Background
Chemical mapping of a 177-nucleotide RNA with 2A3 and DMS. DMS adducts were read by reverse transcription with MarathonRT. For 2A3 the reverse transcriptase was SuperScript II with manganese. Source: RMDB library OK2TRN, as collected in RNAgym. The 2A3 profile rests on 993 reads.
[RMDB]
RNA sequence: GGGAACGACUCGAGUAGAGUCGAAAACUCGCCGUGGGACAGCAGCUUACCCUCUGCUCGGUGCUGGUAUAUACAAGGUCCCUGUCGGGCUGAGCUUUGAUGCCUGGGAGCGUAACCAUCGACCCGGAGCCCUAGUUCAUUUCGAUGAACUAGGGCUAAAAGAAACAACAACAACAAC
Reactivity to 2A3 in 0.01 (KOAc 150mM, MgCl2 10mM, bicine 150mM(pH8.5), 24C), signal-to-noise 1, nucleotides 027 to 126: c010u000c000g020c000c030g130u060g050g020g020a040c000a020g040c000a000g010c010u120u220a190c010c010c010u130c120u070g040c020u060c080g060g000u040g020c030u030g000g120u070a130u010a030u010a190c080a070a100g060g040u000c030c000c000u010g150u030c040g070g040g020c030u050g040a010g000c000u140u140u180g040a090u150g020c000c010u000g000g000g000a150g060c070g020u030a050a060c010c010a040u040c060g010a030c000c010c020g020g030
Reactivity to DMS in 0.01 (KOAc 150mM, MgCl2 10mM, bicine 150mM(pH8.5), 24C), signal-to-noise 2, nucleotides 027 to 126: c010u000c040g030c060c000g030u000g000g000g020a040c090a120g010c020a040g000c090u010u000a140c060c060c060u000c060u000g020c030u000c060g010g010u000g020c060u000g010g000u000a060u000a170u000a110c200a100a110g020g010u000c030c000c000u000g010u010c090g000g000g050c030u000g000a050g010c100u000u010u010g010a170u000g000c030c020u010g000g000g020a100g010c070g020u000a070a110c100c030a070u010c030g010a180c010c000c010g000g010